[RMDB]
RNA sequence: GGGAACGACUCGAGUAGAGUCGAAAAGGCCCAGCGAAACCGCGGUCUACAACGUGUUGCCGCAGUGGGCCAAACUCGCGGCCAAGCCAAAGACAAUGUUCAUCGGUGGGCCGGUGAAGCGCGACGCCCCGUACGCAGACUUCGGUCUGCGUACGGGAAAAGAAACAACAACAACAAC
Reactivity to 2A3 in 0.01 (KOAc 150mM, MgCl2 10mM, bicine 150mM(pH8.5), 24C), signal-to-noise 2, nucleotides 027 to 126: g000g000c010c000c000a000g070c070g050a160a000a090c000c000g010c000g050g030u120c100u100a000c030a150a040c020g210u130g050u150u210g110c090c000g040c070a040g010u000g060g050g030c000c000a040a000a000c000u020c010g040c000g080g020c000c010a100a040g020c000c020a030a100a000g020a050c090a120a260u200g040u080u140c040a050u010c060g000g000u150g000g000g140c000c000g000g000u030g020a060a000g020c030g000c010g140a110c070g020c010